[RMDB]
An RNA of 177 nucleotides, treated with DMS and 2A3 and read out base by base. For DMS, 4,880 sequencing reads were counted.
RNA sequence: GGGAACGACUCGAGUAGAGUCGAAAAGAGUGCAUAUAAUAGUCAUGAAGAGGGCAGAUUAGUUUACCGAUAUGGAGGAGAACCUGUUGGAUCCUUUGUUCAGCCCUGUUUGAGGCCUUUAAUGCCACCUAUAGGACGAGUUCGCUCGUCCUAUAGGAAAAGAAACAACAACAACAAC
Reactivity to DMS in 0.01 (KOAc 150mM, MgCl2 10mM, bicine 150mM(pH8.5), 24C), signal-to-noise 3, nucleotides 027 to 126: g010a070g030u000g020c020a020u000a100u010a050a040u010a120g010u010c010a070u010g010a030a040g000a030g010g010g020c020a080g010a050u000u010a030g010u010u010u000a140c040c010g000a020u000a030u010g010g000a090g030g010a180g010a110a100c020c020u010g010u000u000g010g010a050u000c070c010u000u000u010g000u020u010c060a080g000c020c010c010u000g000u000u000u000g010a090g020g000c010c040u000u000u000a040a040u000g010c020c030a210
Reactivity to 2A3 in 0.01 (KOAc 150mM, MgCl2 10mM, bicine 150mM(pH8.5), 24C), signal-to-noise 3, nucleotides 027 to 126: g100a000g050u210g000c070a000u270a000u020a200a030u040a050g000u020c010a040u080g010a010a020g050a010g030g010g000c020a010g000a060u040u040a010g060u030u060u100a250c000c010g000a000u020a060u240g000g050a060g120g110a180g060a080a080c000c010u030g040u020u040g010g010a030u040c010c000u070u060u090g070u060u030c020a020g010c000c010c000u020g130u010u020u010g040a040g000g000c020c000u010u040u070a030a000u050g010c030c000a030
The 2A3 profile rests on 2,961 reads. For DMS the reverse transcriptase was MarathonRT. The RNA was probed in 150 mM KOAc, 10 mM MgCl2 and 150 mM bicine (pH 8.5) at 24 C.